[RMDB]
RNA sequence: GGGAACGACUCGAGUAGAGUCGAAAAGACGUACAAUCCCUUUCCACAACAUUGAAGAACAAGCAUGUCCUCGGCCAUUAGGCUGUUGUGGGCAGCGUCCUGUAUAUUCCUACAACUUCCCAAAGCCGCCAUUGACUCACUUCGGUGAGUCAAUGGCAAAAGAAACAACAACAACAAC
Reactivity to 2A3 in 0.01 (KOAc 150mM, MgCl2 10mM, bicine 150mM(pH8.5), 24C), signal-to-noise 1, nucleotides 027 to 126: g040a020c040g030u130a060c090a000a070u020c000c000c000u000u080u010c000c000a000c000a090a060c020a030u000u230g080a070a040g000a020a150c010a000a020g100c050a060u000g040u010c000c010u010c000g010g000c000c000a000u020u130a060g000g000c000u020g010u010u150g010u130g010g000g000c020a020g020c020g040u050c000c010u020g060u030a050u030a030u080u080c000c000u010a100c010a140a050c070u010u030c010c000c000a000a060a070g100c030c040